[RMDB]
RNA sequence: GGGAACGACUCGAGUAGAGUCGAAAAAUGGAAGAAGCUGUCAUGCGCUUUGUGGAUAAGGAUGAUAAGGAUGCUAUCAAAGAGUGAGGUGUUCUUUUCCUAUGUAUUACACCUGUUUUGACAAACGGACAUUAGCUUUGUGGCCGACACUCUUGGACAAAGGUUAGAAAUUCGUUUCUAACCUUUGAAAAGAAACAACAACAACAAC
Reactivity to 2A3 in 0.01 (KOAc 150mM, MgCl2 10mM, bicine 150mM(pH8.5), 24C), signal-to-noise 8, nucleotides 027 to 156: a000u070g020g010a040a030g020a040a010g030c020u040g050u110c040a060u090g030c030g020c050u050u070u070g040u040g020g020a050u050a100a050g030g010a030u050g010a020u040a080a020g030g000a020u040g010c020u050a060u230c070a080a060a020g030a020g030u050g020a020g000g010u020g010u040u050c000u030u070u040u040c010c010u070a100u110g070u030a060u070u090a040c030a030c010c020u030g030u030u070u050u110g080a040c040a040a080a000c020g010g020a010c020a060u080u080a030g040c060u060u040u090g020u020g040g000c010c000g030a000c010a010c020u020c000u010u020g000g000a020
Reactivity to DMS in 0.01 (KOAc 150mM, MgCl2 10mM, bicine 150mM(pH8.5), 24C), signal-to-noise 5, nucleotides 027 to 156: a090u010g010g010a100a090g020a110a090g030c000u000g020u000c040a110u000g030c080g010c040u000u010u000g030u000g020g010a070u000a070a100g010g020a090u000g020a120u000a070a090g010g010a100u000g020c050u000a100u000c060a070a060a080g030a110g010u000g010a130g020g030u000g020u000u000c050u000u000u000u000c060c060u000a090u000g020u000a100u000u000a080c050a080c020c020u010g010u000u000u000u000g010a100c080a040a060a120c040g000g010a040c020a070u000u000a100g020c090u000u000u000g030u000g010g010c030c020g000a120c060a040c070u000c010u010u000g010g000a230